[RMDB]
RNA sequence: GGGAACGACUCGAGUAGAGUCGAAAAGAUAUGGAUAUCCCACACUUCAACAGCUCGGAAACGAGACAUGAAGGUGGUGAUAUCCUAAGUCAAAAUCUUACCCCAAACUUCGGUUUGGGGUAAGAAAGUUUUAUUACAACUUCGGUUGUAAUAAAACAAAAGAAACAACAACAACAAC
Reactivity to DMS in 0.01 (KOAc 150mM, MgCl2 10mM, bicine 150mM(pH8.5), 24C), signal-to-noise 2, nucleotides 027 to 126: g010a050u010a300u000g000g020a010u000a000u000c000c010c000a000c020a140c000u010u000c000a020a090c270a150g000c000u010c000g000g000a080a070a230c010g000a030g000a050c070a140u020g020a010a010g040g010u000g000g010u020g020a010u000a000u000c010c000u010a000a060g010u000c040a120a050a080a090u000c000u000u000a000c000c000c010c000a000a000a010c000u000u010c240g040g010u000u000u000g000g010g000g010u000a000a000g000a010a040a070
Reactivity to 2A3 in 0.01 (KOAc 150mM, MgCl2 10mM, bicine 150mM(pH8.5), 24C), signal-to-noise 1, nucleotides 027 to 126: g000a000u060a060u080g000g000a010u020a010u050c010c020c010a010c030a050c010u030u020c000a110a120c020a250g050c030u010c000g010g050a060a080a030c020g010a020g070a120c000a050u090g000a000a010g010g020u010g000g000u170g010a000u000a000u020c000c000u010a050a000g040u020c020a000a010a030a300u000c010u000u010a000c020c010c000c000a000a010a010c010u060u110c220g070g000u000u020u000g000g020g000g010u000a010a000g000a000a000a000
This 177-nucleotide RNA was probed chemically with DMS and 2A3. It was measured as part of the RMDB library TTRDEL. The DMS profile rests on 1,654 reads. The RNA was probed in 150 mM KOAc, 10 mM MgCl2 and 150 mM bicine (pH 8.5) at 24 C. For 2A3 the reverse transcriptase was SuperScript II with manganese.